[RMDB]
This 207-nucleotide RNA was probed chemically with DMS and 2A3. The RNA was probed in 150 mM KOAc, 10 mM MgCl2 and 150 mM bicine (pH 8.5) at 24 C. For 2A3 the reverse transcriptase was SuperScript II with manganese. Reactivities are given for positions 27 through 156.
RNA sequence: GGGAACGACUCGAGUAGAGUCGAAAAAUCCAGAUCGAUGAACCGAUGAUAGGCGCCCGCAUUGAUGGUAUAGGAGCAGUUGGCCAUAGUGGACCAGUCCACGAUCUGUUGAUCUAGGCGUACCGUUUCGCGAUAGAUCAAUCGACUAUACGCACGGCAUUUUGUAAUAAUUCGUUAUUACAAAAUGAAAAGAAACAACAACAACAAC
Reactivity to DMS in 0.01 (KOAc 150mM, MgCl2 10mM, bicine 150mM(pH8.5), 24C), signal-to-noise 5, nucleotides 027 to 156: a120u000c040c020a120g020a060u000c030g010a130u000g000a090a090c030c020g010a110u010g010a170u010a090g020g010c050g020c020c020c020g040c070a100u000u030g010a050u000g010g020u000a080u000a070g000g000a110g020c030a110g010u010u000g010g010c030c040a090u000a130g020u000g020g010a090c030c090a120g010u000c020c020a050c030g020a050u000c020u000g030u010u000g010a020u000c010u010a050g020g010c010g020u000a100c080c130g020u000u010u000c050g030c010g000a110u000a030g000a060u000c030a040a010u000c140g010a060c020u000a070u000a070c050g020c080a100c040g010g000
Reactivity to 2A3 in 0.01 (KOAc 150mM, MgCl2 10mM, bicine 150mM(pH8.5), 24C), signal-to-noise 8, nucleotides 027 to 156: a000u020c010c000a030g020a080u060c040g050a080u070g070a090a060c030c030g040a060u050g030a060u090a150g080g000c050g040c030c020c020g030c060a080u040u110g070a050u070g030g060u060a070u040a140g060g020a040g000c050a040g060u100u110g060g000c020c030a070u050a080g050u070g020g010a050c040c050a050g070u020c020c000a020c030g010a060u020c010u050g040u020u040g020a010u000c010u020a020g110g090c020g000u040a090c030c050g030u060u060u110c030g000c020g040a080u000a010g040a060u010c000a010a060u110c040g020a010c030u060a040u050a150c070g010c050a010c020g040g000